[RMDB]
RNA sequence: GGGAACGACUCGAGUAGAGUCGAAAAAAGAUAUGGACUCGUCCGACAGGCUUGGAUUUAUAGUCACAGAAUGUCGGAAACGACAUUUCACAGCUAUUGUCAGCCUGGGGACGAGUCCUAAGUCAAAGCAUUCCAAUUAGUUCGCUAAUUGGAAUGCAAAAGAAACAACAACAACAAC
Reactivity to 2A3 in 0.01 (KOAc 150mM, MgCl2 10mM, bicine 150mM(pH8.5), 24C), signal-to-noise 2, nucleotides 027 to 126: a020a010g070a060u150a090u120g000g000a000c010u010c000g000u000c000c010g230a300c040a020g000g000c030u240u300g090g000a000u030u300u030a040u040a010g090u060c020a010c010a060g000a010a020u020g020u030c030g050g000a000a070a050c030g010a000c010a000u040u080u120c070a060c000a030g020c000u000a010u010u040g000u020c010a000g010c000c000u010g040g000g000g010a000c000g000a000g000u000c000c000u010a000a000g000u000c020a000a040a050
Reactivity to DMS in 0.01 (KOAc 150mM, MgCl2 10mM, bicine 150mM(pH8.5), 24C), signal-to-noise 3, nucleotides 027 to 126: a120a080g010a050u010a300u030g000g000a000c000u000c000g000u010c000c000g000a260c030a010g010g000c010u000u030g030g020a010u010u000u010a000u000a000g010u000c050a180c300a280g000a010a010u010g020u010c000g020g000a100a070a150c000g000a030c010a000u000u000u010c060a100c300a230g000c000u000a000u000u000g000u000c000a050g010c000c020u000g000g000g000g000a000c000g000a010g010u000c000c000u000a000a090g010u010c040a080a130a130